This 207-nucleotide RNA was probed chemically with 2A3.
[RMDB]
RNA sequence: GGGAACGACUCGAGUAGAGUCGAAAAUUCGGACCGGCUCAUCUCGACAAGAGGCGGCAGUCCUCAGUACUCUUACUCUUUCCUAUAAAGAGGAGACUGCUGGACUCGCCGCCCAAGUUCGAGAUGGGCCACGUUCCGAACGAAGAGAUGCGGGAAGGAAUCGUCUUUAGUUCGCUAAAGACGAUUCAAAAGAAACAACAACAACAAC
Reactivity to 2A3 in 0.01 (KOAc 150mM, MgCl2 10mM, bicine 150mM(pH8.5), 24C), signal-to-noise 3, nucleotides 027 to 156: u020u010c000g010g010a000c030c030g000g000c010u010c000a010u000c010u000c010g000a010c030a100a070g090a180g050g020c020g000g000c000a000g010u000c000c010u000c010a060g000u140a300c010u000c010u070u170a280c010u050c000u030u130u080c070c130u210a180u260a260a040a000g010a000g060g000a000g000a000c000u020g060c080u020g000g010a000c000u030c080g000c000c000g000c000c000c000a000a000g010u000u030c010g000a000g000a000u000g000g000g000c030c000a000c010g000u040u000c000c000g000a010a000c020g020a090a030g050a010g010a060u170g110c120g050g010g050a050a030g100
The reactions ran in a buffer of 150 mM KOAc, 10 mM MgCl2 and 150 mM bicine (pH 8.5), at 24 C.